[RMDB]
RNA sequence: GGGAACGACUCGAGUAGAGUCGAAAAAACUGCUCAGACACAUGCCCCAUAUGUAGGGAGGGCAACACCAACUACACAUGUAAGCUUGGUGCACUAAUUGGACCCCACAAGACUCACACCCCCACACGAAACUCACAUGAUUCGUCAUGUGAGUUUCAAAAGAAACAACAACAACAAC
Reactivity to DMS in 0.01 (KOAc 150mM, MgCl2 10mM, bicine 150mM(pH8.5), 24C), signal-to-noise 2, nucleotides 027 to 126: a070a030c060u000g000c020u000c020a070g010a110c070a060c040a070u020g010c010c040c000c040a070u000a100u030g000u000a060g030g000g020a150g010g000g020c070a060a090c010a060c050c020a040a090c010u000a030c000a200c250a050u000g040u000a000a030g000c090u000u000g030g010u020g030c050a040c100u010a050a110u010u000g010g010a030c050c050c010c010a040c070a030a070g000a040c010u060c020a020c120a300c010c010c000c000c020a100c200a040c170
Reactivity to 2A3 in 0.01 (KOAc 150mM, MgCl2 10mM, bicine 150mM(pH8.5), 24C), signal-to-noise 1, nucleotides 027 to 126: a000a000c110u100g010c010u020c050a070g060a170c000a010c010a100u060g030c000c000c000c000a030u190a040u300g130u160a090g030g000g050a040g000g000g040c020a000a050c010a020c020c010a000a000c000u070a000c060a040c070a100u220g050u080a060a040g000c100u040u020g010g010u040g040c010a010c000u070a130a090u050u060g090g030a130c000c010c000c030a040c000a040a030g050a060c000u060c070a000c030a010c050c010c010c000c000a010c010a000c040